The record gives the reactivity of an RNA of 177 nucleotides to DMS.
Source: RMDB library M2PK90, as collected in RNAgym.
The RNA was probed in 150 mM KOAc, 10 mM MgCl2 and 150 mM bicine (pH 8.5) at 24 C.
The DMS profile rests on 1,075 reads.
RNA sequence: GGGAACGACUCGAGUAGAGUCGAAAAUGAAAGCUGUGUGAGCGAGGCGGGCGGAGGAUGAGGCCGUGCCCGGGCUCUGGCUGCAGCCGCCCGGGGACACGGCGUGCACCCUCGGGCUCCGGAAAAAAUGCACUCGUACUUUCGAGUACGAGUGCAUAAAAGAAACAACAACAACAAC
Reactivity to DMS in 0.01 (KOAc 150mM, MgCl2 10mM, bicine 150mM(pH8.5), 24C), signal-to-noise 1, nucleotides 027 to 126: u000g000a110a070a140g020c000u020g020u000g000u000g010a050g050c070g010a090g000g010c020g010g030g010c030g040g010a020g020g000a050u000g000a080g020g010c010c030g020u000g010c000c000c000g000g000g000c040u020c190u000g030g020c060u020g020c180a160g010c060c060g010c010c000c010g010g010g010g000a140c000a020c000g000g000c010g010u000g000c000a000c040c000c010u000c020g000g030g020c020u000c020c000g000g020a000a010a080a040a080